[RMDB]
RNA sequence: GGGAACGACUCGAGUAGAGUCGAAAAGAUAUGGAUAUGCUUGCAAGGCUGGAGUCGGAAACGACUCCAGCUGAUGACCAAGCCAUAUCCUAAGUCAAACUAGACAACGCUUCGGCGUUGUCUAGAACCCUACGAUAAAGUUCGCUUUAUCGUAGGGAAAAGAAACAACAACAACAAC
Reactivity to 2A3 in 0.01 (KOAc 150mM, MgCl2 10mM, bicine 150mM(pH8.5), 24C), signal-to-noise 2, nucleotides 027 to 126: g000a010u030a010u060g010g000a000u000a000u040g020c010u030u020g070c150a300a300g000g000c000u010g000g020a000g010u020c000g000g000a170a000a010c000g010a010c000u020c010c000a000g010c100u080g000a030u040g030a000c030c030a000a000g010c050c000a000u010a000u020c000c010u000a030a000g000u000c040a090a040a100c010u000a000g000a000c000a010a000c020g020c030u100u120c300g050g000c000g010u010u010g000u000c010u000a000g000a000a000
Reactivity to DMS in 0.01 (KOAc 150mM, MgCl2 10mM, bicine 150mM(pH8.5), 24C), signal-to-noise 4, nucleotides 027 to 126: g000a030u000a170u010g010g010a020u000a000u000g000c010u000u000g000c190a140a130g000g040c000u010g000g010a020g010u000c000g010g000a040a050a130c000g000a020c000u000c010c000a000g020c000u000g010a030u010g020a140c300c000a010a010g000c240c170a000u000a010u000c000c000u000a010a110g000u000c020a140a140a300c000u000a000g000a020c000a000a020c010g010c000u000u020c290g020g000c000g010u000u000g000u000c000u000a000g000a070a180